[RMDB]
RNA sequence: GGGAACGACUCGAGUAGAGUCGAAAAACCUUAUUUUGAGAAGCUGAGGGAUUUGGCCCAUAGAAGCUUCAGCAACCGACUUUAAAUAGCACGGUGCUAAUACCAACGGGCAACUCGAAUGAUAAGUAAAACGUUGACAAGUUCGCUUGUCAACGAAGGACUAUAGUCAGUUCGCUGACUAUAGUCCAAAAGAAACAACAACAACAAC
Reactivity to 2A3 in 0.01 (KOAc 150mM, MgCl2 10mM, bicine 150mM(pH8.5), 24C), signal-to-noise 1, nucleotides 027 to 156: a000c090c010u160u080a200u110u090u150u070g070a010g040a010a010g030c110u080g000a120g010g040g050a130u030u040u040g070g020c060c000c000a040u150a060g040a040a000g000c000u000u000c020a000g000c000a000a090c020c000g070a050c000u100u050u160a160a220a300u130a130g000c030a010c040g000g000u000g010c000u000a040a040u060a120c010c000a030a040c070g000g010g100c090a140a060c070u010c020g110a060a140u090g080a050u060a180a000g080u070a110a180a090a000c030g000u000u000g000a000c000a000a000g000u030u010c110g060c290u020u010g010u000c000a000a000c000g030a010a010

Structure probing data (2A3) for a 207-nucleotide construct. For 2A3, 622 sequencing reads were counted. The data come from the RNA Mapping Database (RMDB), library M2RFPK.